[RMDB]
The record gives the reactivity of an RNA of 177 nucleotides to DMS and 2A3. The DMS profile rests on 4,394 reads. For 2A3 the reverse transcriptase was SuperScript II with manganese. Source: RMDB library OK1LIB, as collected in RNAgym. 2A3 is a SHAPE reagent: it acylates the 2'-hydroxyl of flexible nucleotides of all four kinds. The 2A3 profile rests on 4,182 reads.
RNA sequence: GGGAACGACUCGAGUAGAGUCGAAAAUUCACGAAGUGGUUAUAGAUGACGUCCUUCGAGAGGUUAUUGUCAGCCUGCUGAUCCUCCAAAAUUAACCGGAUGGCCUUCCUCCGUUUGGACUUAUAAACCGUACAUGAGGAUUCGUCCUCAUGUACGGAAAAGAAACAACAACAACAAC
Reactivity to DMS in 0.01 (KOAc 150mM, MgCl2 10mM, bicine 150mM(pH8.5), 24C), signal-to-noise 3, nucleotides 027 to 126: u030u040c070a130c070g010a060a070g020u000g000g000u000u000a110u040a100g020a070u020g000a110c130g000u010c070c020u010u000c040g000a110g020a040g000g010u010u000a070u020u020g000u040c040a050g000c000c020u000g020c050u000g000a040u030c120c010u000c120c070a040a030a090a010u010u000a030a110c080c040g010g010a060u000g000g000c030c130u000u000c020c030u000c000c020g000u000u000u000g020g010a070c080u030u000a090u020a050a090a110
Reactivity to 2A3 in 0.01 (KOAc 150mM, MgCl2 10mM, bicine 150mM(pH8.5), 24C), signal-to-noise 5, nucleotides 027 to 126: u080u020c020a030c090g060a140a050g060u070g060g080u140u090a100u110a190g150a120u140g020a030c070g050u040c020c000u010u040c020g130a160g000a020g080g040u160u120a070u110u130g070u030c010a000g000c010c010u010g030c050u020g030a070u010c000c040u060c030c040a100a300a010a070u120u080a030a020c000c000g020g010a020u030g010g000c010c000u040u030c010c000u020c000c000g030u040u030u060g020g000a010c010u030u040a100u110a040a090a020